The data come from the RNA Mapping Database (RMDB), library M2PK50.
Chemical mapping of a 177-nucleotide RNA with DMS.
The DMS profile rests on 736 reads.
RNA sequence: GGGAACGACUCGAGUAGAGUCGAAAAAUGCACUGGUUCGCCAGUGCAUGAUUACCGAGAAAGUACCUCGGUAUAAAAGUGCAACCCUUGGUAACAAGGGAAUUCCGAACCGAUUCGUCGGUUCGAAAGGGACAGAAGCAUUCGUGCUUCUGUCCCUAAAAGAAACAACAACAACAAC
Reactivity to DMS in 0.01 (KOAc 150mM, MgCl2 10mM, bicine 150mM(pH8.5), 24C), signal-to-noise 1, nucleotides 027 to 126: a000u000g000c010a000c000u000g000g020u000u020c300g030c010c010a020g000u000g000c010a010u010g000a060u010u000a040c000c000g000a020g000a090a150a090g010u010a200c110c000u000c030g010g000u000a010u000a070a090a060a110g010u000g010c300a150a050c000c000c010u010u000g000g000u010a130a280c000a000a000g000g020g000a030a070u010u010c050c020g000a010a000c010c000g000a010u000u010c120g020u000c010g010g010u000u000c000g000a010a040